[RMDB]
RNA sequence: GGGAACGACUCGAGUAGAGUCGAAAAACAGGUGUGGGCUAUGGCCUGUUUACACCUUCAUUUGUUAUAGCUCAUGAUGUACAGAAAAACCUUUAGGCUGAACUUAAAAUAUGCAAGGAGGCAGCUUUAGGCUAAACUUGAUUUAACAACUGUGUCAGUUGAGCUACAUGUUCGCAUGUAGCUCAACAAAAGAAACAACAACAACAAC
Reactivity to 2A3 in 0.01 (KOAc 150mM, MgCl2 10mM, bicine 150mM(pH8.5), 24C), signal-to-noise 1, nucleotides 027 to 156: a000c010a010g020g000u020g010u040g000g100g020c030u010a080u050g020g000c020c000u000g010u000u000u070a050c010a050c000c000u080u110c120a160u070u110u270g170u070u090a040u000a020g010c010u000c010a030u110g030a010u050g070u030a040c020a050g090a030a060a030a050a090c030c000u020u120u140a070g010g000c010u110g040a070a030c010u050u020a000a010a050a140u270a120u220g060c010a000a000g010g000a050g040g040c000a010g030c000u030u050u070a010g000g030c030u080a000a040a040c030u050u050g050a070u180u000u170a060a030c010a010a000c060u070g050u030g020u140c050a020
Structure probing data (2A3) for a 207-nucleotide construct. The 2A3 profile rests on 504 reads. 2A3 adducts were read by reverse transcription with SuperScript II with manganese. Values cover nucleotides 27 to 156.